[RMDB]
RNA sequence: GGGAACGACUCGAGUAGAGUCGAAAACACCCCGCGUUCGCGCGGGGUGAAACAGGUAGUAGCUAUCUCAAUUACCUGAACAGGCCAUGGUCUGGAUAGCAAAAACUGAUGACUUCGGUCAUCAGAACCAGCUAGAGUAGUUCGCUACUCUAGCUGGAAAAGAAACAACAACAACAAC
Reactivity to DMS in 0.01 (KOAc 150mM, MgCl2 10mM, bicine 150mM(pH8.5), 24C), signal-to-noise 1, nucleotides 027 to 126: c000a010c000c020c000c000g010c000g020u000u010c170g060c020g030c070g030g020g040g060u000g000a000a040a070c050a010g000g020u000a060g010u020a090g040c020u000a010u020c050u000c100a080a030u000u000a060c010c020u000g000a140a230c040a020g010g010c000c020a110u000g090g000u010c080u000g000g000a050u000a000g000c020a140a070a050a070a090c010u030g010a000u000g010a000c000u000u010c200g020g000u000c000a000u000c000a000g000a060a110